[RMDB]
RNA sequence: GGGAACGACUCGAGUAGAGUCGAAAAAAGCAGCAUUUCUUUCAUUUGCAUAUGGUCUACCUGUUACAACACAAGGUGUCACCACAAAUAUGCUGUCACAGUGUACAGUGAAACAAGCGAAGAGUGCACGUAACGAGAGGUUCGCCUCUCGUUACGUAAAAGAAACAACAACAACAAC
Reactivity to DMS in 0.01 (KOAc 150mM, MgCl2 10mM, bicine 150mM(pH8.5), 24C), signal-to-noise 3, nucleotides 027 to 126: a100a030g070c200a100g010c020a060u000u000u010c000u000u000u030c030a010u010u010u000g000c110a120u010a170u000g010g020u000c100u010a050c010c000u000g010u000u030a030c240a100a100c090a010c040a110a030g030g010u000g060u030c210a010c010c020a100c120a090a060a030u010a080u010g010c000u000g010u020c070a030c060a050g040u020g000u010a020c000a110g000u000g000a090a080a130c040a020a080g000c110g000a020a000g040a070g010u020g000c000
Reactivity to 2A3 in 0.01 (KOAc 150mM, MgCl2 10mM, bicine 150mM(pH8.5), 24C), signal-to-noise 6, nucleotides 027 to 126: a000a000g150c110a010g010c020a060u120u280u090c040u030u160u040c040a150u020u060u120g050c080a080u090a080u200g000g040u030c060u060a030c000c000u020g020u060u100a160c170a250a030c090a060c050a180a090g030g000u030g050u120c020a010c020c000a000c020a000a170a000u120a050u110g020c000u010g000u050c020a050c040a070g090u120g030u250a050c040a010g010u020g120a050a170a050c050a130a030g050c030g030a010a030g010a000g050u050g000c000
Source: RMDB library OK1LIB, as collected in RNAgym. Chemical mapping of a 177-nucleotide RNA with DMS and 2A3. 2A3 adducts were read by reverse transcription with SuperScript II with manganese. DMS adducts were read by reverse transcription with MarathonRT. Reactivities are given for positions 27 through 126.